Source information:
This 177-nucleotide RNA was probed chemically with DMS and 2A3. The DMS profile rests on 6,022 reads. 2A3 adducts were read by reverse transcription with SuperScript II with manganese. High 2A3 reactivity points to a flexible backbone, as in loops and unpaired stretches. Reactivities are given for positions 27 through 126. Values are in units of 0.01, from 0 to 300, in steps of 10. For DMS the reverse transcriptase was MarathonRT. Conditions: 150 mM KOAc, 10 mM MgCl2 and 150 mM bicine (pH 8.5), 24 C.
RNA sequence: GGGAACGACUCGAGUAGAGUCGAAAACGCGCAGGGAUGUUUUCGAAUCUAUGUUUAUGCUGUCCCUUUGACUGAUUCACAGUUACCAGCAUGGAUUCGCAUAGAUAGGCGUCUCAAAGGGAGCGCGCUGCAGUAUCCUAUUCGUAGGAUACUGCAGAAAAGAAACAACAACAACAAC
Reactivity to DMS in 0.01 (KOAc 150mM, MgCl2 10mM, bicine 150mM(pH8.5), 24C), signal-to-noise 5, nucleotides 027 to 126: c020g030c020g040c030a160g010g010g000a030u000g010u000u000u010u010c070g020a100a050u000c000u000a010u010g000u000u010u000a060u010g010c020u000g010u010c070c090c100u020u010u010g000a060c090u000g010a210u000u010c250a140c010a040g010u000u000a110c280c120a010g000c000a010u000g010g000a080u010u010c150g010c160a050u000a040g000a060u010a100g010g010c010g010u000c010u000c030a090a080a110g010g010g000a110g000c010g000c040g020
Reactivity to 2A3 in 0.01 (KOAc 150mM, MgCl2 10mM, bicine 150mM(pH8.5), 24C), signal-to-noise 4, nucleotides 027 to 126: c020g000c000g000c020a060g020g010g030a020u020g050u020u100u070u090c030g050a080a080u000c000u020a010u020g060u040u120u030a050u070g020c020u040g050u120c040c020c000u020u060u050g010a020c020u020g040a110u210u140c110a080c010a200g010u030u050a040c040c010a000g000c000a010u020g020g090a120u120u100c040g000c020a030u060a030g040a030u050a040g060g010c010g020u000c000u010c000a110a110a010g100g040g000a080g030c010g000c000g000